[RMDB]
RNA sequence: GGGAACGACUCGAGUAGAGUCGAAAAGACGUGGAGGUUGCGCGCCCUCCUUUGCGCGUAAGUACGUCGAAAUUCGGUGCUUAGGAUCGCACCGUUUGAUCCAUUUGAUAUCCGCUUGGUGCCGCGGUUGGGCAUUUACACUUACCCGAAAGGGGAAACCUGAUCAGUCAUUCGUGACUGAUCAGGUAAAAGAAACAACAACAACAAC
Reactivity to DMS in 0.01 (KOAc 150mM, MgCl2 10mM, bicine 150mM(pH8.5), 24C), signal-to-noise 1, nucleotides 027 to 156: g010a030c020g010u000g010g020a000g010g020u000u010g030c000g000c010g020c000c010c030u000c060c090u000u000u000g020c000g040c000g070u000a010a070g010u010a060c040g050u020c000g010a150a100a060u000u000c000g020g010u000g090c020u010u010a300g010g060a140u010c170g040c010a060c000c000g070u010u000u000g000a100u000c030c070a270u000u000u010g000a200u000a060u010c090c050g020c060u000u000g000g040u000g100c000c010g040c100g010g000u000u000g010g000g060c020a070u000u000u000a150c060a020c050u000u000a250c000c000c010g000a080a170a200g000g020g010g010a070a150
Reactivity to 2A3 in 0.01 (KOAc 150mM, MgCl2 10mM, bicine 150mM(pH8.5), 24C), signal-to-noise 2, nucleotides 027 to 156: g010a000c000g010u010g000g160a080g120g150u020u020g000c000g010c000g010c030c000c020u190c010c030u050u050u110g000c020g000c000g000u000a030a000g080u080a020c010g000u030c030g040a070a010a000u050u050c010g000g000u010g030c010u160u220a160g030g090a050u130c080g010c000a000c000c000g000u000u000u040g030a020u000c000c010a060u140u060u050g180a150u100a130u090c020c040g020c030u040u070g010g030u010g030c000c000g000c020g130g000u110u090g070g020g020c030a010u090u040u040a020c060a010c030u090u080a080c020c000c000g050a060a040a050g020g000g000g010a010a010